[RMDB]
RNA sequence: GGGAACGACUCGAGUAGAGUCGAAAAGAUAUGGACUGUAAUACCGGAGCAACAGCACAGAUCGGAAACGAUCUGUGACAUGCUCGUAUACAGUCCUAAGUCAAAAGCCAAAUCUUCGGAUUUGGCACGUAAGAACGGUCUUCGGACCGUUCUUACGAAAAGAAACAACAACAACAAC
Reactivity to DMS in 0.01 (KOAc 150mM, MgCl2 10mM, bicine 150mM(pH8.5), 24C), signal-to-noise 2, nucleotides 027 to 126: g000a000u000a300u000g000g010a020c000u010g030u000a070a150u030a030c130c300g050g020a030g000c060a030a150c300a210g000c000a000c010a000g010a000u000c030g040g010a120a130a160c030g010a030u030c000u010g020u000g000a020c070a170u000g030c020u000c000g000u000a020u000a000c010a010g010u010c000c000u000a000a060g030u000c040a110a060a140a080g000c000c000a010a010a000u010c000u000u010c230g030g010a030u000u000u000g000g000c000a000
Reactivity to 2A3 in 0.01 (KOAc 150mM, MgCl2 10mM, bicine 150mM(pH8.5), 24C), signal-to-noise 1, nucleotides 027 to 126: g030a010u050a040u090g010g020a010c030u020g050u060a300a180u050a150c080c300g200g010a020g000c080a020a220c130a190g030c000a030c000a000g000a010u010c030g020g030a100a000a020c020g000a000u000c000u010g000u000g030a000c000a000u060g000c000u000c020g000u030a030u010a000c010a010g020u010c000c010u010a050a000g030u000c050a080a010a040a130g000c000c000a020a000a000u000c000u050u110c300g140g000a000u020u030u010g020g020c000a020
Notes: Structure probing data (DMS and 2A3) for a 177-nucleotide construct. Values cover nucleotides 27 to 126. 2A3 adducts were read by reverse transcription with SuperScript II with manganese. Values are in units of 0.01, from 0 to 300, in steps of 10. The reactions ran in a buffer of 150 mM KOAc, 10 mM MgCl2 and 150 mM bicine (pH 8.5), at 24 C. For DMS the reverse transcriptase was MarathonRT.